[RMDB]
RNA sequence: GGGAACGACUCGAGUAGAGUCGAAAACAAUGCAGGUUAAGCCAAAGGGAUGUCCCGACCGGAGGCCGACAAUCCAGGGAACCGGAUGUCAUCACGUUGUUGCAGUACCAGAGGGCAUCUUAAAUCCAAAAGAACACAUAGUUCGCUAUGUGUUCAAUCUAAAAAGUGAGUUCGCUCACUUUUUAGAAAAAGAAACAACAACAACAAC
Reactivity to DMS in 0.01 (KOAc 150mM, MgCl2 10mM, bicine 150mM(pH8.5), 24C), signal-to-noise 2, nucleotides 027 to 156: c070a090a090u010g010c030a110g020g050u000u000a100a090g020c040c040a040a300a300g010g000g030a050u000g020u000c000c010c020g000a300c000c020g000g010a300g000g040c010c030g020a110c060a020a100u000c030c030a070g010g000g010a170a120c030c010g060g000a040u010g000u000c030a160u010c030a130c140g030u010u000g020u000u000g010c010a110g000u010a040c050c030a220g000a070g000g040g000c020a020u000c030u000u000a040a050a140u010c060c060a070a040a060a180g010a020a010c000a000c000a000u000a010g000u000u000c300g020c000u000a010u010g000u000g010u000u000c020a020a080
Reactivity to 2A3 in 0.01 (KOAc 150mM, MgCl2 10mM, bicine 150mM(pH8.5), 24C), signal-to-noise 2, nucleotides 027 to 156: c030a030a100u180g070c080a050g130g000u130u140a080a030g010c020c000a060a000a020g010g000g030a030u040g000u020c000c000c010g000a000c020c000g010g000a010g020g000c010c000g000a000c040a100a080u060c050c050a010g040g000g100a040a080c050c040g000g030a010u020g040u040c000a050u060c010a000c080g040u050u010g010u020u020g060c030a050g040u080a060c030c050a040g030a030g050g000g000c020a010u000c010u050u090a140a110a020u060c020c020a090a110a010a000g000a000a000c000a000c000a000u020a000g000u030u060c100g070c080u000a000u010g000u010g000u000u000c000a000a000

Conditions: 150 mM KOAc, 10 mM MgCl2 and 150 mM bicine (pH 8.5), 24 C. Chemical mapping of a 207-nucleotide RNA with DMS and 2A3. 2A3 adducts were read by reverse transcription with SuperScript II with manganese. DMS adducts were read by reverse transcription with MarathonRT. It was measured as part of the RMDB library M2RFPK. Reactivities are given for positions 27 through 156.